[RMDB]
RNA sequence: GGGAACGACUCGAGUAGAGUCGAAAAACAAUGCUACAGGCCAGACUGGCUGUUGAGCUGCAAAUCCUCAGGGAUGAAUUACUCUCAGGCCACUACCAGCCCUUGCCCGCCAGACGGGUUUACAUCCACGUAACGGACCUUUCGAGGUCCGUUACGUAAAAGAAACAACAACAACAAC
Reactivity to DMS in 0.01 (KOAc 150mM, MgCl2 10mM, bicine 150mM(pH8.5), 24C), signal-to-noise 1, nucleotides 027 to 126: a150c100a110a070u010g000c010u000a070c040a040g010g000c010c120a090g010a060c190u000g010g000c000u000g010u000u010g000a030g000c010u010g030c230a070a060a040u000c000c000u010c190a110g010g000g000a050u010g000a120a080u000u000a050c100u000c010u000c050a060g030g010c050c030a060c050u000a100c010c050a080g020c020c070c080u000u000g010c030c010c030g020c000c060a060g000a220c070g050g000g000u000u000u000a030c190a060u010c040c020